[RMDB]
RNA sequence: GGGAACGACUCGAGUAGAGUCGAAAACGCUUUGUUCGGGAAGGAGCGAACUGCACGAUGGAGAGCAUUUCUCGCCGGAGCUCUGGCAGGACCAUCACUUCUAUUGACAGGGCCCAAGACGCGGCACAUGCAUAAGAUACUUCGGUAUCUUAUGCAUAAAAGAAACAACAACAACAAC
Reactivity to 2A3 in 0.01 (KOAc 150mM, MgCl2 10mM, bicine 150mM(pH8.5), 24C), signal-to-noise 3, nucleotides 027 to 126: c030g010c020u100u060u100g050u090u050c050g020g000g050a050a060g020g010a060g020c030g020a050a050c030u050g000c050a060c090g080a070u100g060g030a070g010a010g060c040a060u060u110u010c050u020c060g000c030c020g040g030a060g000c020u010c020u070g040g000c040a030g000g040a030c000c030a040u090c010a020c050u110u090c030u080a210u060u080g010a050c020a030g000g000g030c020c000c000a020a030g080a020c060g000c040g120g000c030a040c010
Reactivity to DMS in 0.01 (KOAc 150mM, MgCl2 10mM, bicine 150mM(pH8.5), 24C), signal-to-noise 6, nucleotides 027 to 126: c140g010c060u000u000u010g010u010u000c080g020g000g010a100a090g010g000a070g010c070g000a060a090c050u000g010c060a110c070g010a110u010g010g010a080g010a070g020c120a100u000u010u000c020u000c070g010c060c030g000g000a140g010c060u000c020u000g000g010c020a060g010g010a080c090c060a030u000c110a090c100u010u000c050u000a150u010u000g010a060c060a060g000g010g000c020c030c040a060a080g000a070c120g010c060g010g000c090a100c200